[RMDB]
This 177-nucleotide RNA was probed chemically with DMS and 2A3.
Reactivities are rounded to 0.1 and cut off at 0 and 3.
2A3 adducts were read by reverse transcription with SuperScript II with manganese.

RNA sequence: GGGAACGACUCGAGUAGAGUCGAAAAAAGAUAUGGAGAUUGAUAGCUGUGUGAACUACGAUCGGGUGAGCUCGGAAACGAGCUCAUCUCUAGCGUGUCGCACACCGAAGCAAUCUCCUAAGUCAAACAAUCUAACAAACUUCGGUUUGUUAGAUUGAAAAGAAACAACAACAACAAC
Reactivity to DMS in 0.01 (KOAc 150mM, MgCl2 10mM, bicine 150mM(pH8.5), 24C), signal-to-noise 7, nucleotides 027 to 126: a090a070g000a030u010a300u010g000g000a020g010a020u000u000g000a040u010a270g010c200u000g030u000g020u000g020a080a050c040u020a020c010g010a100u010c300g000g000g000u000g000a020g010c000u000c000g000g000a090a090a210c000g000a010g010c000u000c000a000u000c000u010c080u000a090g010c030g010u000g000u000c010g010c010a000c010a010c130c030g000a120a170g000c010a010a010u000c010u000c000c000u000a020a080g000u000c030a130a130a260
Reactivity to 2A3 in 0.01 (KOAc 150mM, MgCl2 10mM, bicine 150mM(pH8.5), 24C), signal-to-noise 4, nucleotides 027 to 126: a010a000g090a030u130a050u170g000g000a020g000a000u010u020g010a020u050a080g030c080u010g000u020g000u000g070a160a030c050u190a020c300g100a100u160c050g040g020g000u000g010a010g000c010u000c010g000g030a060a050a060c000g000a010g010c010u000c000a000u010c000u000c000u010a020g060c010g010u020g010u030c010g000c010a000c010a000c000c010g020a230a030g020c000a000a010u000c010u000c000c000u000a020a010g020u000c000a060a040a050

The data come from the RNA Mapping Database (RMDB), library TTRDES.